[RMDB]
RNA sequence: GGGAACGACUCGAGUAGAGUCGAAAAAUGAACGUGGUGGGCGUAAGUUAGUAGAAGAUCUAAUGGUACGCGGUGGGUUUUCGACUGUACUGGAAACCACCACCACCACCAAGUCGUUCCCACCGAAUCUAACAGAAAAGUUCGCUUUUCUGUUAGAAAAAGAAACAACAACAACAAC
Reactivity to 2A3 in 0.01 (KOAc 150mM, MgCl2 10mM, bicine 150mM(pH8.5), 24C), signal-to-noise 5, nucleotides 027 to 126: a000u180g010a050a000c050g000u000g000g000u010g010g060g010c010g000u010a040a020g010u000u010a010g010u020a030g080a300a040g030a090u030c000u030a020a000u030g240g020u060a010c010g000c030g010g020u030g010g090g010u000u010u020u020c020g020a050c070u250g090u300a050c020u030g030g030a030a020a010c000c010a000c010c010a000c000c010a010c010c000a000c000c010a030a000g010u000c010g000u000u000c010c000c000a000c010c010g010a030a060
Reactivity to DMS in 0.01 (KOAc 150mM, MgCl2 10mM, bicine 150mM(pH8.5), 24C), signal-to-noise 4, nucleotides 027 to 126: a060u000g000a050a050c110g000u010g000g000u000g010g010g020c010g030u010a130a240g010u000u000a020g000u000a100g020a170a130g000a090u000c010u000a010a020u000g010g010u000a010c020g020c050g030g010u000g010g000g010u010u000u000u000c000g010a070c120u020g000u010a060c130u000g000g010a030a030a100c030c020a050c030c020a300c050c020a020c020c010a030c020c070a060a020g020u000c000g010u000u000c000c000c000a070c130c140g000a080a110
Structure probing data (2A3 and DMS) for a 177-nucleotide construct.
The RNA was probed in 150 mM KOAc, 10 mM MgCl2 and 150 mM bicine (pH 8.5) at 24 C.
Values cover nucleotides 27 to 126.
For DMS, 3,631 sequencing reads were counted.